[RMDB]
RNA sequence: GGGAACGACUCGAGUAGAGUCGAAAAGGGGUCUGUCUACCCACCUCCCAUCAAGGAGCGAAGAACGUACUGAAGCCUCCACGGUACGGGAGCUCCUGUGGGAGAGGACAGACGGAGGCACCCAAAACGCGAUCAGUUCUUCGGAACUGAUCGCGAACUGAAUAAUGAACUUCGGUUCAUUAUUCAGAAAAGAAACAACAACAACAAC
Reactivity to 2A3 in 0.01 (KOAc 150mM, MgCl2 10mM, bicine 150mM(pH8.5), 24C), signal-to-noise 3, nucleotides 027 to 156: g090g000g030g010u000c000u000g000u000c000u020a150c060c070c030a040c000c010u000c010c010c010a020u160c140a140a100g010g000a000g000c010g050a220a020g010a010a010c000g020u010a000c010u040g060a240a040g020c000c000u000c000c000a000c000g000g010u000a000c000g000g000g010a000g000c000u010c010c000u000g010u020g000g000g000a000g000a000g000g000a000c000a010g000a010c070g010g000a000g000g000c010a020c010c050c000a020a120a020a050c010g000c000g000a000u000c000a000g000u000u000c010u040u120c220g080g000a000a000c000u000g000a000u000c000g010c000g000a010a010
Reactivity to DMS in 0.01 (KOAc 150mM, MgCl2 10mM, bicine 150mM(pH8.5), 24C), signal-to-noise 1, nucleotides 027 to 156: g040g010g090g020u010c010u030g040u000c000u020a110c010c020c040a300c000c000u010c000c000c000a030u010c080a240a010g010g030a010g030c000g000a060a160g000a180a300c000g000u000a040c050u010g000a050a220g000c020c010u010c010c000a250c070g000g000u000a040c010g000g100g000a140g010c030u010c010c000u020g040u000g010g000g000a080g000a120g000g000a060c020a030g010a030c000g000g000a040g180g060c010a110c010c000c030a070a050a090a170c020g010c010g000a030u000c000a020g010u000u000c010u000u000c300g050g000a010a020c010u000g010a000u000c010g000c030g000a000a050